[RMDB]
RNA sequence: GGGAACGACUCGAGUAGAGUCGAAAAAAAAAGAUAUGGAGUCGUUAAGACAGCGUGCUGGCUACCCACCUAUAUCGGAAACGAUAUAGAGGCCAUCACGCAAUGACGACGACUCCUAAGUCAAAAAGACAUAUAUAAACUUCGGUUUAUAUAUGUCAAAAGAAACAACAACAACAAC
Reactivity to 2A3 in 0.01 (KOAc 150mM, MgCl2 10mM, bicine 150mM(pH8.5), 24C), signal-to-noise 1, nucleotides 027 to 126: a020a040a020a080a060g110a090u180a120u160g010g010a010g000u000c000g020u010u050a130a090g120a110c030a060g130c000g000u000g000c010u000g010g010c010u080a240c050c000c000a010c000c010u000a000u000a010u010c000g000g080a040a060a050c020g000a010u010a000u000a030g000a010g040g000c010c000a020u000c000a000c000g000c010a020a130u070g010a010c040g010a000c000g000a000c000u000c000c000u000a250a040g100u100c060a090a070a010a040a240
Reactivity to DMS in 0.01 (KOAc 150mM, MgCl2 10mM, bicine 150mM(pH8.5), 24C), signal-to-noise 2, nucleotides 027 to 126: a060a060a110a150a100g000a030u000a300u000g000g000a000g020u000c000g010u000u020a090a170g000a230c150a110g000c000g010u010g000c060u000g020g020c020u010a080c050c020c050a300c160c020u000a030u000a000u010c000g030g000a060a040a090c000g020a010u000a010u000a000g010a080g040g000c000c000a000u020c010a000c000g000c010a030a000u010g000a100c250g000a040c010g000a000c000u010c000c000u000a020a060g010u010c040a040a100a110a190a100